Annotation:
Chemical mapping of a 177-nucleotide RNA with DMS. It was measured as part of the RMDB library OK2TST.
RNA sequence: GGGAACGACUCGAGUAGAGUCGAAAACUUCAAUAAGAAUGGAGGCAACUAUCCUUCCUGUCAAAUCAAGCAAGGUGCUACAAGUUAUAUCUCUGAACAGAUCAAAUCAAAGGACCCUAUUAACAAGCUAAUGCAAGGCUUUCGAGCCUUGCAUUAGAAAAGAAACAACAACAACAAC
Reactivity to DMS in 0.01 (KOAc 150mM, MgCl2 10mM, bicine 150mM(pH8.5), 24C), signal-to-noise 1, nucleotides 027 to 126: c010u000u000c040a060a100u010a120a100g000a120a050u000g000g000a090g010g010c170a090a060c080u030a080u020c150c000u000u000c000c020u000g010u030c040a130a040a050u000c080a100a090g010c120a070a080g000g010u000g010c020u000a030c100a080a100g040u010u010a120u000a070u000c040u010c000u000g010a050a090c060a080g000a050u000c040a020a020a110u010c070a030a080a170g000g050a090c040c000c020u000a080u000u020a050a110c100a090a100g000

Values cover nucleotides 27 to 126. Conditions: 150 mM KOAc, 10 mM MgCl2 and 150 mM bicine (pH 8.5), 24 C.